[RMDB]
RNA sequence: GGGAACGACUCGAGUAGAGUCGAAAAGGGACUGGCCCGAUGAAGCCCGGCAACCUAACUUUAUUUAAGCGUAAAGUGAAGGUGCUAAUUCCAGCAAAAUGGUGUAUUCCGUUUUGGUAGAUGAGAGAAGCGUGACAUGAGUUCGCUCAUGUCACAAGUUUAAUAUGCUGUUCGCAGCAUAUUAAACAAAAGAAACAACAACAACAAC
Reactivity to DMS in 0.01 (KOAc 150mM, MgCl2 10mM, bicine 150mM(pH8.5), 24C), signal-to-noise 5, nucleotides 027 to 156: g010g000g010a100c040u000g010g010c000c020c020g020a150u000g000a120a140g000c000c010c040g010g020c020a050a040c010c000u000a160a010c000u000u000u000a010u000u000u000a110a210g030c300g020u000a010a010a020g010u000g010a090a060g020g010u000g020c010u010a070a190u000u000c010c010a060g020c010a020a020a030a040u000g010g010u000g010u010a100u000u000c010c010g040u000u000u000u000g010g010u000a040g000a060u000g010a150g010a180g010a090a100g020c110g010u000g000a020c000a010u000g000a030g020u000u000c300g020c000u000c000a010u010g010u000c000a000c010a010a050
Reactivity to 2A3 in 0.01 (KOAc 150mM, MgCl2 10mM, bicine 150mM(pH8.5), 24C), signal-to-noise 9, nucleotides 027 to 156: g020g000g010a020c030u030g040g040c020c000c030g010a030u100g060a040a030g020c010c010c000g020g000c040a120a100c000c000u020a000a010c010u030u010u050a060u060u160u140a160a060g120c060g030u010a010a010a010g000u020g070a140a030g000g010u000g000c000u010a010a040u120u030c020c000a010g030c030a060a010a000a040u030g000g040u100g040u160a100u150u070c010c020g010u000u000u030u020g070g020u090a090g020a170u150g040a040g010a010g030a180a040g100c060g060u000g000a000c000a000u000g000a000g020u040u100c170g030c060u000c000a000u000g000u000c000a000c000a000a000